Chemical mapping of a 177-nucleotide RNA with 2A3 and DMS.
2A3 adducts were read by reverse transcription with SuperScript II with manganese.
The reactions ran in a buffer of 150 mM KOAc, 10 mM MgCl2 and 150 mM bicine (pH 8.5), at 24 C.

RNA sequence: GGGAACGACUCGAGUAGAGUCGAAAACACCGAUCCCGGACGUCGAGAGAUGCAUCGGGUCAAGACAACUCCCAGGGUUGGGUCCAAGUCCAAGUGGUUUCUGGACGUUGGUCCAGAUAUGCUGUGCGUGAGCUUACCCAUUCGUGGGUAAGCUCACAAAAGAAACAACAACAACAAC
Reactivity to 2A3 in 0.01 (KOAc 150mM, MgCl2 10mM, bicine 150mM(pH8.5), 24C), signal-to-noise 2, nucleotides 027 to 126: c110a020c000c050g050a080u140c050c010c000g040g040a000c000g040u030c000g060a010g000a000g000a200u000g090c110a070u050c010g000g010g000u010c040a020a040g040a000c030a050a040c020u080c030c000c010a030g100g010g000u120u020g140g000g010u000c000c050a060a020g050u000c000c000a060a030g000u040g150g060u050u100u020c020u000g020g020a030c060g030u040u280g040g010u000c000c020a000g000a010u120a010u040g060c050u020g030u050g070c010
Reactivity to DMS in 0.01 (KOAc 150mM, MgCl2 10mM, bicine 150mM(pH8.5), 24C), signal-to-noise 1, nucleotides 027 to 126: c090a130c140c040g020a140u070c000c000c010g000g000a050c000g000u000c020g040a230g000a100g000a020u040g040c200a110u000c110g000g000g000u000c050a150a080g020a060c120a180a110c140u020c000c000c010a120g000g000g000u000u040g010g000g000u000c030c020a080a040g000u000c030c000a120a070g000u000g030g070u010u020u000c000u000g000g010a040c050g010u050u000g000g040u000c000c010a070g000a040u020a070u030g000c010u080g020u000g000c140